[RMDB]
RNA sequence: GGGAACGACUCGAGUAGAGUCGAAAACCUCCUACCUUCGGGUAGGAGGAAAGCACGCGCAACGUAAGGGACAAGCAAGUCAACGCGAACGAACGUAAAUAAAAACGCAGGGCUUCGGCCCUGCGAAGAAUUAACUAUGGUUCGCCAUAGUUAAUUCAAAAGAAACAACAACAACAAC
Reactivity to DMS in 0.01 (KOAc 150mM, MgCl2 10mM, bicine 150mM(pH8.5), 24C), signal-to-noise 4, nucleotides 027 to 126: c000c000u000c000c010u000a000c000c000u000u020c180g020g030g020u000a010g010g010a000g000g000a000a010a050g020c070a070c050g010c060g010c070a090a080c050g020u000a070a130g010g010g010a030c070a080a100g010c100a070a070g010u010c030a060a050c060g020c010g000a080a060c070g010a070a070c090g010u000a040a080a120u000a050a050a090a180a140c050g030c010a010g000g000g020c000u000u010c180g050g010c000c010c000u010g000c000g010a010a010
Reactivity to 2A3 in 0.01 (KOAc 150mM, MgCl2 10mM, bicine 150mM(pH8.5), 24C), signal-to-noise 3, nucleotides 027 to 126: c000c000u000c010c000u010a000c000c010u020u080c210g160g000g000u000a010g000g000a000g000g000a020a000a000g020c020a010c060g100c000g010c020a020a100c040g040u100a070a100g100g010g020a020c030a050a050g110c050a080a070g080u060c020a040a070c030g020c020g060a080a010c040g030a040a010c030g060u110a040a140a090u150a030a080a080a010a010c010g000c000a000g000g010g000c030u030u120c190g050g000c010c000c010u000g000c000g010a000a000